[RMDB]
RNA sequence: GGGAACGACUCGAGUAGAGUCGAAAAAUCCCGGGGAACCCGGCGAAUGCCCCCACAUAGCAGAGUCCGGGACCCCCUCCUAAAAGACCGAGGGGGGGUGCUUGGAGCACGGGGGUCCCAGUGGAUCAGGGUGCCUACUUCGGUAGGCACAAAAGAAACAACAACAACAAC
Reactivity to 2A3 in 0.01 (KOAc 150mM, MgCl2 10mM, bicine 150mM(pH8.5), 24C), signal-to-noise 2, nucleotides 027 to 129: a000u030c000c000c000g010g010g040g000a050a080c020c000c000g020g000c070g070a100a040u110g000c000c000c010c060c010a110c040a110u110a000g060c050a020g030a000g210u020c000c000g020g000g010a010c000c020c000c020c000u020c000c000u100a090a100a060a040g140a030c120c110g050a170g040g010g000g000g000g000g000u060g090c000u050u140g060g020a000g000c030a000c090g000g000g030g000g000u000c000c000c000a070g070u080g040g000a050u070c040a040g070g040
Reactivity to DMS in 0.01 (KOAc 150mM, MgCl2 10mM, bicine 150mM(pH8.5), 24C), signal-to-noise 3, nucleotides 027 to 129: a050u000c000c000c000g120g000g030g000a190a150c010c000c000g060g080c020g050a190a040u070g010c020c020c010c010c030a120c190a070u040a140g000c160a140g010a220g020u000c030c000g000g000g000a080c000c040c000c000c000u040c000c000u030a090a210a080a100g020a190c020c030g000a060g000g000g000g000g000g000g000u060g030c020u020u050g000g000a080g030c080a050c040g020g000g030g030g000u020c050c030c010a070g000u030g030g030a120u060c000a040g000g000
Source information:
Structure probing data (2A3 and DMS) for a 170-nucleotide construct. 2A3 adducts were read by reverse transcription with SuperScript II with manganese. The DMS profile rests on 6,287 reads. For 2A3, 2,779 sequencing reads were counted. DMS adducts were read by reverse transcription with MarathonRT. Source: RMDB library 15KLIB, as collected in RNAgym.